[RMDB]
The record gives the reactivity of an RNA of 177 nucleotides to DMS.
RNA sequence: GGGAACGACUCGAGUAGAGUCGAAAAUUCACCUGCCUUAAACAAGCUGACUAUUCAGGCACUUUACAAUCUAGCUGGUGGGAAUAUGGAUUACUUAUUGACUAAGUUAGGUAUAGGGAACAAUCAAGUUGCUACCUUUAUUCGUAAAGGUAGCAACAAAAGAAACAACAACAACAAC
Reactivity to DMS in 0.01 (KOAc 150mM, MgCl2 10mM, bicine 150mM(pH8.5), 24C), signal-to-noise 4, nucleotides 027 to 126: u010u010c070a100c010c020u010g020c010c040u010u000a080a060a120c170a150a110g030c060u000g010a080c150u000a150u010u000c090a050g000g020c020a090c070u010u000u010a060c080a080a070u000c040u000a030g020c020u000g010g000u000g010g020g000a070a070u000a050u010g020g020a110u010u020a070c070u010u000a050u000u010g030a080c130u000a050a030g020u000u010a010g000g020u000a100u010a070g020g000g010a050a080c130a090a090u010c160a070a110

For DMS the reverse transcriptase was MarathonRT. DMS (dimethyl sulfate) methylates the pairing face of unpaired adenines and cytosines.